[RMDB]
Record summary
This 207-nucleotide RNA was probed chemically with DMS.
RNA sequence: GGGAACGACUCGAGUAGAGUCGAAAAGAAGAUUAAGUGAGAUAUCGUUUGUCUUAGACCUUGUGUGUUGCUGUGAAGGAAUACCCGAGGCUGGGUGAUUUAUAAAGAGGUUUAUUUGGCUCCCAGUUCUACAGGCUGUAGAAGAAGCAUGGCACCAACUUUAAGGACUUUUCGAAGUCCUUAAAGUAAAAGAAACAACAACAACAAC
Reactivity to DMS in 0.01 (KOAc 150mM, MgCl2 10mM, bicine 150mM(pH8.5), 24C), signal-to-noise 1, nucleotides 027 to 156: g010a060a110g030a130u000u000a040a100g030u010g000a120g000a150u000a090u020c090g010u010u000u010g030u000c040u000u000a100g010a100c000c010u000u010g040u010g010u020g020u010u000g010c010u000g000u000g010a170a120g000g020a100a090u000a040c010c020c000g020a100g030g000c020u010g030g000g020u010g020a070u010u000u010a050u010a070a040a050g000a130g010g020u000u030u000a060u000u000u000g040g000c010u000c010c020c020a050g000u000u010c030u000a100c020a080g010g040c040u000g040u010a040g030a040a070g000a030a110g020c040a070u010g010g000c070a120c050c020a040
About this RNA
Source: RMDB library OK3TST, as collected in RNAgym. Reactivities are given for positions 27 through 156. The DMS profile rests on 2,707 reads.